[RMDB]
RNA sequence: GGGAACGACUCGAGUAGAGUCGAAAAGUGUCCCAUUUGAGCAGCAGGAGGGAGGCUGGGCAUAGGAUAAGGGGAUGCAGUGGGGACAGAAGGAAUAUUAGCAUCUCAGAAGUCCCCUCAGAUUCCCAUCUAGCAACGAGUUCGCUCGUUGCUAGAUAAAAGAAACAACAACAACAAC
Reactivity to DMS in 0.01 (KOAc 150mM, MgCl2 10mM, bicine 150mM(pH8.5), 24C), signal-to-noise 1, nucleotides 027 to 126: g010u000g010u040c010c000c000a140u000u030u000g020a100g040c110a050g000c030a070g040g000a100g020g000g000a050g000g000c070u000g010g030g020c100a070u000a060g050g010a080u000a070a100g010g000g000g020a030u000g020c160a140g020u010g020g010g020g010a040c000a000g000a170a180g000g010a050a070u000a120u030u030a170g010c120a020u010c070u010c020a040g010a230a180g000u000c000c010c030c000u000c020a090g000a140u000u000c000c000c010